The record gives the reactivity of an RNA of 177 nucleotides to 2A3 and DMS.
RNA sequence: GGGAACGACUCGAGUAGAGUCGAAAAUGAUAGCAAAGAAGGUCCUUAUGAUCCAAAGGGGACUAUUAGUGACUCCAUCCUUACAAAAAGCUGUACAUGGCUAUCAACGGCAGGGCAGAAGAACAUACAUAUUAGAGUUUUUCGAAACUCUAAUAUGAAAAGAAACAACAACAACAAC
Reactivity to 2A3 in 0.01 (KOAc 150mM, MgCl2 10mM, bicine 150mM(pH8.5), 24C), signal-to-noise 4, nucleotides 027 to 126: u060g010a010u030a020g020c020a020a070a120g110a080a060g090g000u010c000c000u060u080a140u130g110a090u080c040c030a060a070a140g080g000g000g020a000c020u030a070u050u120a030g070u020g040a020c020u010c040c000a070u040c020c000u050u060a030c070a020a180a020a040a020g040c040u040g010u050a040c030a120u120g060g000c000u020a020u070c020a020a020c020g010g000c010a010g030g000g000c010a020g030a150a010g020a060a010c020a040u160a030
Reactivity to DMS in 0.01 (KOAc 150mM, MgCl2 10mM, bicine 150mM(pH8.5), 24C), signal-to-noise 8, nucleotides 027 to 126: u010g010a050u000a040g010c040a090a100a120g010a120a170g010g010u000c010c030u000u010a080u000g010a110u000c060c060a050a100a170g010g010g000g020a040c030u000a060u000u000a090g020u000g010a070c050u000c040c040a070u000c030c020u000u010a100c130a060a080a090a080a080g010c070u000g010u010a060c130a060u000g010g000c020u000a030u000c040a050a090c090g010g010c020a020g010g000g010c080a070g000a050a050g000a060a060c090a080u010a150
Background: 2A3 adducts were read by reverse transcription with SuperScript II with manganese. The reactions ran in a buffer of 150 mM KOAc, 10 mM MgCl2 and 150 mM bicine (pH 8.5), at 24 C.